This 177-nucleotide RNA was probed chemically with 2A3. Reactivities are given for positions 27 through 126. 2A3 adducts were read by reverse transcription with SuperScript II with manganese. The reactions ran in a buffer of 150 mM KOAc, 10 mM MgCl2 and 150 mM bicine (pH 8.5), at 24 C.
RNA sequence: GGGAACGACUCGAGUAGAGUCGAAAACUUGUCAUUCGAUGUUCACCUAAACUUUUAGAGAAACCAUUAGUCUUAAAGACGUUGAUACGAUUGGCAUCUGCAAUAUUUCUCACAUAAAUACCACUGCCAGCCGCAGAAUGUUCGCAUUCUGCGGCUGAAAAGAAACAACAACAACAAC
Reactivity to 2A3 in 0.01 (KOAc 150mM, MgCl2 10mM, bicine 150mM(pH8.5), 24C), signal-to-noise 2, nucleotides 027 to 126: c080u050u000g010u000c000a030u050u000c000g140a200u100g120u090u000c000a010c030c050u050a150a130a090c080u000u010u080u120a080g060a060g000a160a050a070c080c020a150u040u070a180g040u000c060u000u040a020a020a000g020a000c040g030u000u060g000a000u090a140c010g010a020u000u060g000g000c000a070u000c030u180g030c030a090a040u050a090u040u040u060c000u030c000a010c000a130u280a180a200a000u190a000c030c060a030c090u100g030c000